[RMDB]
The record gives the reactivity of an RNA of 177 nucleotides to DMS. The RNA was probed in 150 mM KOAc, 10 mM MgCl2 and 150 mM bicine (pH 8.5) at 24 C. For DMS the reverse transcriptase was MarathonRT.

RNA sequence: GGGAACGACUCGAGUAGAGUCGAAAAGGGGUGGGUUCGCCCACCCCAAAAUUUCUUACAAUGUCAAAAUUAACCGACACUUUACUGGACAUUGUAAGAACGGAAAACCGUCUGCUUCGGCAGACGGGACCACUUAAAACUUCGGUUUUAAGUGGUCAAAAGAAACAACAACAACAAC
Reactivity to DMS in 0.01 (KOAc 150mM, MgCl2 10mM, bicine 150mM(pH8.5), 24C), signal-to-noise 1, nucleotides 027 to 126: g000g000g020g050u000g000g000g060u000u030c160g000c000c000c000a030c010c020c000c000a000a010a060a020u010u000u000c000u000u000a000c020a010a000u010g000u010c020a030a080a170a110u010u000a070a050c100c040g020a080c180a070c300u000u010u010a050c210u000g020g020a040c020a000u000u000g000u000a000a000g000a000a020c300g010g020a050a020a050a300c000c010g010u000c000u000g020c000u000u010c170g010g000c010a000g020a000c000g020g020